RNA sequence: GGGAACGACUCGAGUAGAGUCGAAAAUAGCGAAGUAGGAUUUUAUGCGUCAAGUGUUCACAGGCUGGGGAGUCGCCGUGAAACGAAUAGCAGAAAGCGUGCUGCUUACGAUAUAAUUUCCGCACCCAUAAGAAGUCUCUGUUCGCAGAGACUUCAACUAAGGUUGAAGAUUCGUCUUCAACCUUAGAAAAGAAACAACAACAACAAC
Reactivity to DMS in 0.01 (KOAc 150mM, MgCl2 10mM, bicine 150mM(pH8.5), 24C), signal-to-noise 2, nucleotides 027 to 156: u000a150g010c040g020a030a110g020u000a080g000g020a030u010u000u010u000a010u030g000c020g030u000c080a040a160g040u010g020u000u000c010a050c050a100g030g010c010u000g000g030g020g000a150g030u000c010g000c030c020g030u000g000a040a030a030c060g020a100a050u000a040g000c010a040g000a040a010a160g040c120g000u010g010c020u000g020c020u000u000a060c000g020a070u010a040u000a030a070u000u000u000c010c000g020c050a190c030c010c020a130u010a070a100g000a020a020g000u000c000u000c010u000g000u010u000c300g020c020a010g010a040g000a020c010u000u000c000a020a130
Reactivity to 2A3 in 0.01 (KOAc 150mM, MgCl2 10mM, bicine 150mM(pH8.5), 24C), signal-to-noise 6, nucleotides 027 to 156: u130a010g040c040g060a100a010g050u120a090g030g020a030u030u030u040u060a040u100g020c020g000u040c060a070a060g030u050g050u250u040c020a020c040a080g030g000c020u110g040g030g030g030a050g110u110c040g010c020c020g010u020g010a030a020a000c030g020a050a040u040a070g000c010a000g060a070a080a020g120c070g070u100g030c020u000g000c010u030u050a040c010g020a020u010a010u020a100a070u040u020u020c010c010g020c030a040c010c030c020a050u070a100a060g000a000a000g000u000c000u000c000u010g020u030u060c190g000c060a000g000a000g000a000c000u000u000c000a000a000

An RNA of 207 nucleotides, treated with DMS and 2A3 and read out base by base. The data come from the RNA Mapping Database (RMDB), library M2RFPK. DMS adducts were read by reverse transcription with MarathonRT.